The record gives the reactivity of an RNA of 207 nucleotides to 2A3 and DMS. Source: RMDB library OK3TST, as collected in RNAgym. Reactivities are given for positions 27 through 156. For DMS, 1,598 sequencing reads were counted. For 2A3 the reverse transcriptase was SuperScript II with manganese.

RNA sequence: GGGAACGACUCGAGUAGAGUCGAAAACUGACAUAGUGAAACCCCAUCUCUACUAACAAUACAAAAUUAGCCAGGUGUGAUGGCACAUGCCUGAAAUCCCAGCUACUUGGGGGGUUGAGGCAGGAGAAUUGCUUGAACCCAGGAGGCAGAGGUUGCAUGAUUAUUAUAGUUUCGACUAUAAUAAUCAAAAAGAAACAACAACAACAAC
Reactivity to 2A3 in 0.01 (KOAc 150mM, MgCl2 10mM, bicine 150mM(pH8.5), 24C), signal-to-noise 1, nucleotides 027 to 156: c100u140g080a010c040a260u230a080g050u000g040a110a050a050c040c040c050c000a010u000c020u000c020u080a070c060u050a050a050c080a170a070u220a120c140a010a200a120a140u070u030a050g050c110c050a020g010g020u030g000u040g060a110u020g110g000c030a010c020a110u060g040c000c030u020g020a050a020a000u050c000c030c000a000g020c050u100a080c040u060u030g070g020g000g020g020g000u000u020g010a000g000g060c000a020g050g020a090g060a100a040u120u010g010c020u050u000g020a000a020c020c000c000a020g070g000a050g010g000c040a000g000a000g110g000u050u010g060c030a020
Reactivity to DMS in 0.01 (KOAc 150mM, MgCl2 10mM, bicine 150mM(pH8.5), 24C), signal-to-noise 1, nucleotides 027 to 156: c050u000g000a200c070a070u000a110g000u020g010a030a090a070c000c020c010c010a060u000c010u010c010u000a040c000u000a040a050c010a040a170u010a160c070a100a100a090a090u000u000a050g030c020c290a120g010g030u010g020u010g020a080u010g000g040c060a130c090a070u010g010c010c020u040g000a070a050a040u000c020c000c010a090g010c070u000a010c070u020u000g000g030g000g030g050g050u000u000g000a010g000g010c010a020g040g000a120g010a070a080u010u000g000c010u000u000g010a060a070c010c010c000a130g010g010a180g020g120c000a050g030a120g050g030u010u010g000c030a190